Notes
The record gives the reactivity of an RNA of 177 nucleotides to 2A3 and DMS. The RNA was probed in 150 mM KOAc, 10 mM MgCl2 and 150 mM bicine (pH 8.5) at 24 C.
[RMDB]
RNA sequence: GGGAACGACUCGAGUAGAGUCGAAAACAGCUGAACAAGGACGCUUCUUAAAAUUCUUCGUUGAUGCAGGUUUAAUUAAGAUCAAAAAAGGCGUAAAAAUUGAAGAUGCUAAGUUUAGUGAUAUUACCAACAGGUACUACUUCGGUAGUACCUGUUGAAAAGAAACAACAACAACAAC
Reactivity to 2A3 in 0.01 (KOAc 150mM, MgCl2 10mM, bicine 150mM(pH8.5), 24C), signal-to-noise 5, nucleotides 027 to 126: c010a000g000c000u010g010a000a010c010a040a070g140g060a030c070g000c020u040u020c000u050u110a100a190a130a130u090u000c020u080u060c030g070u020u090g050a080u120g040c060a070g030g030u050u040u030a040a110u080u100a110a040g040a070u070c130a090a070a070a030a050a020g060g000c010g030u080a030a080a050a060a040u100u090g020a040a000g020a010u040g000c010u020a060a040g020u020u010u040a020g000u010g110a090u040a120u200u150a050c020
Reactivity to DMS in 0.01 (KOAc 150mM, MgCl2 10mM, bicine 150mM(pH8.5), 24C), signal-to-noise 4, nucleotides 027 to 126: c090a170g020c020u010g010a050a050c040a080a140g010g000a070c130g000c050u030u000c020u000u010a050a070a030a030u010u020c080u000u000c050g010u000u000g010a160u030g000c190a100g010g020u000u020u030a070a080u010u070a110a080g000a020u020c010a020a030a100a040a110a150g000g010c010g000u030a010a020a070a050a060u000u000g000a060a020g010a030u020g000c030u000a070a180g000u000u000u000a050g010u000g000a090u030a050u010u030a080c210
2A3 adducts were read by reverse transcription with SuperScript II with manganese. Source: RMDB library OK1LIB, as collected in RNAgym.